Conditions: 150 mM KOAc, 10 mM MgCl2 and 150 mM bicine (pH 8.5), 24 C. The record gives the reactivity of an RNA of 177 nucleotides to 2A3 and DMS. Values are in units of 0.01, from 0 to 300, in steps of 10. For 2A3 the reverse transcriptase was SuperScript II with manganese. DMS adducts were read by reverse transcription with MarathonRT.

[RMDB]
RNA sequence: GGGAACGACUCGAGUAGAGUCGAAAAGAACCAAAAAUAGAGCCAAUAAUUUGGAUGGCUGUGCCUUGAAGAAAUACAGUUAGUGUCAUUUCAUCAGGCCAUAGCUGUCCAAAUUGUUAGGUUCGAACCUUAGUCGGUUAUUCGUAACCGACUAAGGAAAAGAAACAACAACAACAAC
Reactivity to 2A3 in 0.01 (KOAc 150mM, MgCl2 10mM, bicine 150mM(pH8.5), 24C), signal-to-noise 6, nucleotides 027 to 126: g070a020a040c030c030a050a040a000a000a000u200a040g010a000g000c000c000a000a010u000a010a000u000u000u000g000g000a000u000g010g000c000u000g010u010g010c010c020u090u220g010a040a030g000a010a020a000u020a010c010a050g130u270u300a160g110u230g020u110c100a020u030u000u000c010a030u010c000a000g000g000c010c000a020u040a020g000c000u000g000u000c000c000a000a000a000u000u000g000u000u010a030g000g000u000u000c010g000a010a010
Reactivity to DMS in 0.01 (KOAc 150mM, MgCl2 10mM, bicine 150mM(pH8.5), 24C), signal-to-noise 3, nucleotides 027 to 126: g010a180a170c000c040a050a030a050a130a080u020a140g000a020g040c000c000a030a020u000a000a010u010u000u000g000g000a000u000g000g000c000u040g030u000g000c300c000u010u010g020a000a020g010a010a030a020u000a000c000a070g010u080u090a130g030u040g020u000c200a000u000u020u000c010a100u000c010a000g000g010c100c030a000u000a020g010c000u020g000u000c020c000a000a000a000u000u000g020u010u000a100g060g000u000u000c000g020a160a170